[RMDB]
RNA sequence: GGGAACGACUCGAGUAGAGUCGAAAAUUUAAUCUUUGGCAGUUUAUUAAGUAUUUGGGUGGCGCGUCAUCGAUACUCUAAGGGUUUUGCGGUAUUGUACGUGUGGUUAGUUAAUCUAGGUGAAGCAAUAUAUUCGUAUCUUCGGAUACGAAUAUAUAAAAGAAACAACAACAACAAC
Reactivity to 2A3 in 0.01 (KOAc 150mM, MgCl2 10mM, bicine 150mM(pH8.5), 24C), signal-to-noise 5, nucleotides 027 to 126: u050u070u080a030a030u040c050u070u100u040g040g000c010a020g070u110u060u070a150u090u140a190a020g060u050a110u040u120u100g060g010g020u040g020g010c030g010c030g060u020c010a050u070c010g020a020u010a070c030u010c020u100a060a100g100g020g010u020u080u090u110g030c020g000g010u030a050u060u100g050u050a040c040g020u040g010u020g070g020u020u010a060g010u020u080a050a060u020c030u050a050g090g000u050g080a030a000g040c020a020
Reactivity to DMS in 0.01 (KOAc 150mM, MgCl2 10mM, bicine 150mM(pH8.5), 24C), signal-to-noise 7, nucleotides 027 to 126: u020u030u030a070a080u000c050u010u010u010g010g020c050a100g010u010u010u030a050u020u040a050a110g010u010a060u020u000u010g010g010g040u010g000g000c060g020c070g000u010c050a050u020c060g010a070u020a050c050u010c050u010a080a080g000g000g010u010u010u010u010g020c060g010g010u000a030u010u010g010u010a040c090g010u010g020u010g000g000u000u000a060g010u000u020a050a080u010c030u000a060g000g010u010g000a060a090g020c120a060

The record gives the reactivity of an RNA of 177 nucleotides to 2A3 and DMS.
In probing experiments dimethyl sulfate is read out at A N1 and C N3, which are open when not base-paired.
For 2A3, 3,798 sequencing reads were counted.
Source: RMDB library OK1LIB, as collected in RNAgym.